RNA sequence: GGGAACGACUCGAGUAGAGUCGAAAAUCGCCACCGCCAGUGGCAUGGCCGCGGUAUUCACCUCGCUGGGCGCGCUGCUGGGUGCCGGAGACCGACUGGUUGCCGCGCGCAGCCUGUUUGGCUCGUGCUCCCGCACCAACUUCGGUUGGUGCGGGAGAAAAGAAACAACAACAACAAC
Reactivity to 2A3 in 0.01 (KOAc 150mM, MgCl2 10mM, bicine 150mM(pH8.5), 24C), signal-to-noise 2, nucleotides 027 to 126: u080c040g140c000c000a020c000c030g080c030c030a040g000u070g040g030c080a000u050g210g090c050c050g000c030g030g000u160a280u160u150c160a050c120c010u050c000g010c050u240g040g000g000c050g000c000g000c000u000g000c000u040g000g000g140u020g000c000c020g090g030a100g000a190c000c070g010a000c040u050g000g000u000u030g000c010c000g290c070g030c060g020c120a000g000c000c020u000g020u010u000u130g000g000c000u000c000g010u050g000
Source: RMDB library OK1LIB, as collected in RNAgym.
An RNA of 177 nucleotides, treated with 2A3 and read out base by base.
2A3 adducts were read by reverse transcription with SuperScript II with manganese.
The reactions ran in a buffer of 150 mM KOAc, 10 mM MgCl2 and 150 mM bicine (pH 8.5), at 24 C.